The record gives the reactivity of an RNA of 177 nucleotides to DMS.
It was measured as part of the RMDB library M2PK90.
The reactions ran in a buffer of 150 mM KOAc, 10 mM MgCl2 and 150 mM bicine (pH 8.5), at 24 C.
RNA sequence: GGGAACGACUCGAGUAGAGUCGAAAAACAUAGGUUGGGCCAUAGGCGCUGCGGUUCAUCAUCUUGCCCUCGCCAGGACCGCUCCCGUACUACUACUUGGCGUCGCGGAUACCGGGUUGGAAAACAAUACUGGAAUUAGCUUCGGCUAAUUCCAGUAAAAAGAAACAACAACAACAAC
Reactivity to DMS in 0.01 (KOAc 150mM, MgCl2 10mM, bicine 150mM(pH8.5), 24C), signal-to-noise 1, nucleotides 027 to 126: a120c050a130u000a070g020g030u010u000g020g000g000c050c010a110u020a110g020g000c010g030c110u000g000c080g010g010u000u000c090a100u000c070a120u000c050u000u000g000c020c010c030u000c080g030c040c000a070g010g010a060c020c040g000c060u000c030c010c010g020u000a060c060u010a080c040u000a030c060u000u000g030g000c070g010u000c040g010c040g030g000a120u010a080c070c070g000g000g060u000u020g000g000a080a030a070a100c170a030a100